[RMDB]
RNA sequence: GGGAACGACUCGAGUAGAGUCGAAAACUCUAUGGCUAUGAAAGCGUGGACAACGGAGAUCAAAUAGACCAAUUACUGAAUAUGGCUUUUGACAUAUCUUCUUCUUCAUGGGUGAGGAUUAAGCUGAUUCCGGAAAAAGUUUCGACUUUUUCCGGAAAAAAGAAACAACAACAACAAC
Reactivity to 2A3 in 0.01 (KOAc 150mM, MgCl2 10mM, bicine 150mM(pH8.5), 24C), signal-to-noise 1, nucleotides 027 to 126: c000u000c010u010a040u130g000g000c010u000a060u080g130a040a120a000g070c000g000u000g020g000a020c010a080a000c050g000g050a040g010a020u030c000a000a010a010u060a060g190a140c060c010a000a050u070u030a120c050u120g020a170a060u110a030u050g030g000c000u000u070u040u040g030a010c000a120u070a060u010c000u020u020c000u010u000c000u050u000c030a060u100g100g000g000u000g110a000g020g010a020u090u000a130a000g030c000u000g000a110
Reactivity to DMS in 0.01 (KOAc 150mM, MgCl2 10mM, bicine 150mM(pH8.5), 24C), signal-to-noise 2, nucleotides 027 to 126: c020u000c010u020a090u010g000g050c010u000a080u020g000a120a050a110g020c060g000u000g010g000a040c120a040a050c190g000g010a020g000a070u010c070a020a050a050u040a060g000a130c000c000a040a050u000u010a150c220u030g000a100a060u010a140u010g000g010c020u000u000u000u000g000a120c190a080u000a060u000c030u000u000c010u010u010c110u000u010c060a040u010g000g000g010u010g000a090g000g010a050u010u000a020a080g000c070u000g000a270